Source: RMDB library TTRDEL, as collected in RNAgym. This 177-nucleotide RNA was probed chemically with 2A3 and DMS. The reactions ran in a buffer of 150 mM KOAc, 10 mM MgCl2 and 150 mM bicine (pH 8.5), at 24 C.
[RMDB]
RNA sequence: GGGAACGACUCGAGUAGAGUCGAAAAGAUAUGGAGAGGUAUGAAUUCUCGCCGUCGGAAACGACGGUCGAGUUAUCAUACUACCCACCUCCUAAGUCAAACGUAAGAUUGUUCGCAAUCUUACGAAGCUACAACAAAGCUUCGGCUUUGUUGUAGCAAAAGAAACAACAACAACAAC
Reactivity to 2A3 in 0.01 (KOAc 150mM, MgCl2 10mM, bicine 150mM(pH8.5), 24C), signal-to-noise 3, nucleotides 027 to 126: g010a040u150a080u180g000g020a020g020a040g010g000u000a010u030g020a080a300u230u060c000u000c020g000c000c000g000u010c010g000g000a070a050a040c010g010a000c000g000g020u050c000g000a000g000u000u020a110u010c000a000u000a010c000u030a070c040c010c000a070c040c010u000c010c000u070a100a040g150u130c150a130a080a120c040g010u000a000a010g000a020u020u010g020u060u070c170g000c120a000a010u010c020u000u000a000c000g010a030a020
Reactivity to DMS in 0.01 (KOAc 150mM, MgCl2 10mM, bicine 150mM(pH8.5), 24C), signal-to-noise 4, nucleotides 027 to 126: g020a100u010a110u010g010g010a000g000a190g000g000u000a000u000g000a040a300u000u000c000u000c000g000c010c010g050u000c000g010g000a090a050a080c000g010a020c000g000g000u010c020g000a010g000u000u000a050u000c000a000u000a010c010u010a100c140c050c040a300c170c000u000c000c010u000a110a130g000u010c130a090a090a200c010g000u010a000a000g000a010u000u010g000u000u040c210g010c000a010a010u000c000u000u000a000c000g000a030a060